Structure probing data (2A3 and DMS) for a 207-nucleotide construct. The 2A3 profile rests on 2,859 reads. The RNA was probed in 150 mM KOAc, 10 mM MgCl2 and 150 mM bicine (pH 8.5) at 24 C.

[RMDB]
RNA sequence: GGGAACGACUCGAGUAGAGUCGAAAAUUGACGGAACAACAGCGCCGUUUGUGGUAAUUGCUUUAAUCUCUGUAUCGCUAACAACCUUAUUCACUACCGCCAUUUGCAUUGGCGAAGAUAGAAACAUGAUUGUUGCGCCUGGGCGAAUCAGCGAUAGCCUCGUUACUGAGUUCGCUCAGUAACGAGGAAAAGAAACAACAACAACAAC
Reactivity to 2A3 in 0.01 (KOAc 150mM, MgCl2 10mM, bicine 150mM(pH8.5), 24C), signal-to-noise 5, nucleotides 027 to 156: u080u080g030a020c020g010g010a110a020c040a030a030c030a140g050c060g020c090c040g050u050u060u080g050u060g030g040u080a080a150u100u120g050c040u120u100u090a120a080u020c010u000c010u020g030u050a100u050c000g000c040u050a030a040c010a020a040c030c040u100u150a070u110u100c020a010c080u100a060c030c010g020c020c000a050u060u060u180g090c080a080u040u090g030g000c020g010a010a010g010a020u090a010g020a020a040a000c040a010u090g030a180u060u080g060u030u040g000c000g040c020c040u080g050g020g000c040g060a020a090u020c020a030g010c000g060a040u050a030g020
Reactivity to DMS in 0.01 (KOAc 150mM, MgCl2 10mM, bicine 150mM(pH8.5), 24C), signal-to-noise 2, nucleotides 027 to 156: u000u020g040a100c030g010g060a080a100c010a070a110c080a080g040c060g040c000c040g010u000u000u000g060u000g020g010u010a110a130u000u000g010c000u000u000u000a130a130u000c020u000c040u000g030u000a090u000c010g000c050u010a040a060c030a060a060c010c010u000u000a090u000u000c020a070c050u000a040c300c050g020c010c010a100u010u000u010g030c180a210u010u010g010g000c000g000a040a030g010a140u000a020g000a070a040a080c090a030u010g000a110u000u000g020u000u000g060c050g000c060c000u000g040g020g010c010g000a020a110u000c030a050g000c050g020a080u010a120g030
For DMS, 3,796 sequencing reads were counted. It was measured as part of the RMDB library OK3TST. For 2A3 the reverse transcriptase was SuperScript II with manganese.